[RMDB]
RNA sequence: GGGAACGACUCGAGUAGAGUCGAAAACGGUAUCCCGACAUCAAGAUCGCUGUCGCGGAGCUGGACGUCAACGACCACGAGCGGGUGCCCAAGGUAUUCGCCGAACUCAGCGAUGAGAUUGGCGGCACGCAACCAGACCUUUCGAGGUCUGGUUGCGAAAAGAAACAACAACAACAAC
Reactivity to DMS in 0.01 (KOAc 150mM, MgCl2 10mM, bicine 150mM(pH8.5), 24C), signal-to-noise 2, nucleotides 027 to 126: c040g010g060u000a070u000c010c000c000g000a000c070a020u010c060a080a190g040a130u020c160g000c130u000g000u000c020g030c180g010g010a300g020c100u020g010g010a110c070g010u000c070a040a160c030g010a030c020c010a240c100g000a040g050c070g020g010g020u000g020c000c010c050a130a130g000g010u010a110u030u010c050g000c000c000g010a040a120c000u010c000a010g010c300g000a140u000g020a000g010a070u000u000g020g010c030g010g010c180a090
Reactivity to 2A3 in 0.01 (KOAc 150mM, MgCl2 10mM, bicine 150mM(pH8.5), 24C), signal-to-noise 1, nucleotides 027 to 126: c010g000g020u120a160u130c010c010c010g000a000c000a020u090c030a040a050g140a300u200c090g000c050u040g000u000c000g030c040g000g000a010g040c030u100g060g100a090c020g080u030c030a060a010c050g010a030c000c000a010c040g030a010g030c030g010g020g120u190g060c000c000c000a000a030g150g010u120a140u120u190c000g000c020c000g010a000a010c010u040c010a000g020c020g060a130u040g010a000g000a070u030u000g050g000c040g040g000c020a020
Chemical mapping of a 177-nucleotide RNA with DMS and 2A3. The DMS profile rests on 847 reads. DMS adducts were read by reverse transcription with MarathonRT.